Description
Chemical mapping of a 207-nucleotide RNA with 2A3 and DMS. The DMS profile rests on 3,745 reads.
RNA sequence: GGGAACGACUCGAGUAGAGUCGAAAACUUUAGCAGCUUAAUAACCUGCUCAUAGCCUUAUCGCCUCAGCUUCCGCUCGUAAGACGAGGGCAACGAUAAGUCACCCAAAACGAGAUCGUGUGGACGCCGCCGUUUGAGGAUCGAAACACUAAAUUGAGCUAAUAUAGAUGUUCGCAUCUAUAUUAGCAAAAGAAACAACAACAACAAC
Reactivity to 2A3 in 0.01 (KOAc 150mM, MgCl2 10mM, bicine 150mM(pH8.5), 24C), signal-to-noise 5, nucleotides 027 to 156: c010u080u090u030a010g000c000a000g010c010u040u020a030a010u040a040a050c000c000u000g030c000u030c040a110u120a030g020c010c000u020u010a020u030c010g020c030c010u020c020a040g010c010u030u010c030c040g050c050u040c020g020u040a050a060g080a160c020g020a010g000g030g000c050a070a040c030g000a010u010a050a020g050u060c060a180c050c010c000a050a050a000a030c020g010a010g000a060u080c050g010u020g000u010g040g050a030c060g000c020c010g000c020c070g060u010u050u160g040a020g000g010a010u110c050g030a040a050a030c050a030c060u090a040a120a160u110u110g040a030
Reactivity to DMS in 0.01 (KOAc 150mM, MgCl2 10mM, bicine 150mM(pH8.5), 24C), signal-to-noise 2, nucleotides 027 to 156: c020u010u000u000a040g020c040a040g020c010u000u010a160a210u000a170a130c300c010u000g020c000u010c090a070u010a070g000c150c000u000u000a030u000c010g010c010c050u000c070a150g020c030u000u010c010c030g020c090u000c040g000u020a130a180g040a060c040g000a070g010g000g040c000a100a050c020g020a060u010a020a040g020u000c020a160c030c050c010a040a060a070a110c080g000a170g020a090u000c050g010u010g040u000g000g010a150c070g020c020c040g010c040c050g020u010u000u000g020a040g020g000a100u010c020g000a280a100a070c050a050c040u010a030a080a170u010u000g010a300